The record gives the reactivity of an RNA of 177 nucleotides to 2A3 and DMS.
Conditions: 150 mM KOAc, 10 mM MgCl2 and 150 mM bicine (pH 8.5), 24 C.
Source: RMDB library OK2TRN, as collected in RNAgym.
2A3 adducts were read by reverse transcription with SuperScript II with manganese.
RNA sequence: GGGAACGACUCGAGUAGAGUCGAAAAGGCGUGUAUGACGCUGGGCACGUUGAGUGAAUCUCAGGCGCAGCGCCUCGCGAACGCCGGGCUGGAUUACUACAACCACAACCUGGACACCUCGCCGGAGACCUUCCUCUCCAUUCGUGGAGAGGAAGGUAAAAGAAACAACAACAACAAC
Reactivity to 2A3 in 0.01 (KOAc 150mM, MgCl2 10mM, bicine 150mM(pH8.5), 24C), signal-to-noise 1, nucleotides 027 to 126: g000g000c010g010u000g030u030a160u130g060a040c000g000c040u030g000g110g000c020a050c200g050u090u190g110a050g000u140g300a260a160u000c060u010c030a020g050g000c050g000c090a000g020c010g000c020c000u030c040g000c040g060a090a020c050g020c020c000g000g020g000c020u020g000g030a070u040u090a140c080u060a040c020a150a030c010c000a030c010a060a080c000c000u020g010g040a000c000a020c040c030u030c040g070c030c040g050g000a060g020
Reactivity to DMS in 0.01 (KOAc 150mM, MgCl2 10mM, bicine 150mM(pH8.5), 24C), signal-to-noise 2, nucleotides 027 to 126: g010g010c000g000u000g010u000a080u010g000a060c000g010c000u000g000g000g020c010a110c120g020u000u000g010a100g000u000g010a160a160u020c010u000c000a080g000g010c000g010c040a020g020c020g010c010c030u020c120g030c050g010a100a060c100g000c020c000g020g000g000c060u010g000g000a090u010u000a080c120u000a090c210a050a030c030c040a100c090a060a040c020c010u010g000g010a080c100a080c120c050u020c080g020c030c060g010g000a170g020